An RNA of 177 nucleotides, treated with DMS and 2A3 and read out base by base. High DMS reactivity at an A or C suggests that its Watson-Crick edge is free. For 2A3 the reverse transcriptase was SuperScript II with manganese. It was measured as part of the RMDB library OK2TRN. The 2A3 profile rests on 1,062 reads. The RNA was probed in 150 mM KOAc, 10 mM MgCl2 and 150 mM bicine (pH 8.5) at 24 C. Reactivities are given for positions 27 through 126.
[RMDB]
RNA sequence: GGGAACGACUCGAGUAGAGUCGAAAAAUCAUAAUGUCAAAUUUGAGUUUACGAACACCUUCAGCUAGGAUUGCGAAGCUUAAGUUACCUUGACAAUUCAGCAUAAAGCAGGCAAAAUUGAUGGGUGCUCUCACCCACAAUUCGUUGUGGGUGAGAGAAAAGAAACAACAACAACAAC
Reactivity to DMS in 0.01 (KOAc 150mM, MgCl2 10mM, bicine 150mM(pH8.5), 24C), signal-to-noise 2, nucleotides 027 to 126: a060u010c050a110u030a050a060u000g010u010c050a070a060a030u000u000u020g000a090g020u000u000u010a090c060g010a080a060c170a120c010c020u000u000c160a090g020c080u000a070g000g010a090u000u010g030c080g000a090a060g010c030u000u000a030a050g000u010u010a080c150c100u000u000g000a060c030a040a130u010u010c110a020g020c070a030u010a090a080a110g000c050a040g000g010c060a050a040a050a050u000u010g000a070u010g010g010g030u000g000
Reactivity to 2A3 in 0.01 (KOAc 150mM, MgCl2 10mM, bicine 150mM(pH8.5), 24C), signal-to-noise 1, nucleotides 027 to 126: a000u100c070a050u110a150a070u180g060u090c050a000a020a100u080u080u070g000a030g060u030u070u090a080c060g040a040a050c030a050c070c000u070u090c020a040g020c130u060a030g000g080a120u080u150g030c000g040a010a020g000c010u050u050a030a010g010u020u040a040c050c000u040u020g010a030c040a000a040u060u040c000a050g030c000a030u160a150a150a000g030c030a010g020g000c050a060a000a110a020u060u050g020a090u080g020g050g070u060g000